Notes
The data come from the RNA Mapping Database (RMDB), library OK2TST. This 177-nucleotide RNA was probed chemically with DMS and 2A3. The RNA was probed in 150 mM KOAc, 10 mM MgCl2 and 150 mM bicine (pH 8.5) at 24 C.
[RMDB]
RNA sequence: GGGAACGACUCGAGUAGAGUCGAAAAGCAGUACCGUAUUGCCCGGUAAUACCGGCAAUGAGCUUGCCGUUCUCAUCUUCAUAGAACUGGCCGUCGACGCCUGCCUGCAGGAUGAAGGUGUUGAUCACGUAGGACUGACGUUCGCGUCAGUCCUACGAAAAGAAACAACAACAACAAC
Reactivity to DMS in 0.01 (KOAc 150mM, MgCl2 10mM, bicine 150mM(pH8.5), 24C), signal-to-noise 2, nucleotides 027 to 126: g050c040a070g010u010a070c050c070g010u010a030u000u000g020c170c000c020g000g030u010a050a100u000a300c040c000g000g040c020a060a030u020g030a130g020c050u000u000g080c070c020g000u000u000c010u000c050a000u000c030u020u020c040a080u000a070g000a140a100c100u000g000g010c040c050g000u020c060g030a060c070g000c180c040u010g000c020c050u000g000c140a090g010g000a010u000g020a090a030g000g010u000g000u000u000g000a110u000c030a140
Reactivity to 2A3 in 0.01 (KOAc 150mM, MgCl2 10mM, bicine 150mM(pH8.5), 24C), signal-to-noise 1, nucleotides 027 to 126: g030c010a020g060u050a080c040c130g040u060a120u020u070g040c090c090c030g030g000u150a180a100u230a220c000c000g010g010c010a010a020u040g060a030g000c040u080u140g080c020c020g050u040u020c030u020c010a010u000c010u060u090c020a090u030a060g060a130a060c140u100g020g000c000c040g040u080c020g020a020c080g000c020c010u010g070c000c020u050g040c060a010g000g100a000u030g040a030a020g000g030u000g050u000u050g040a070u090c050a000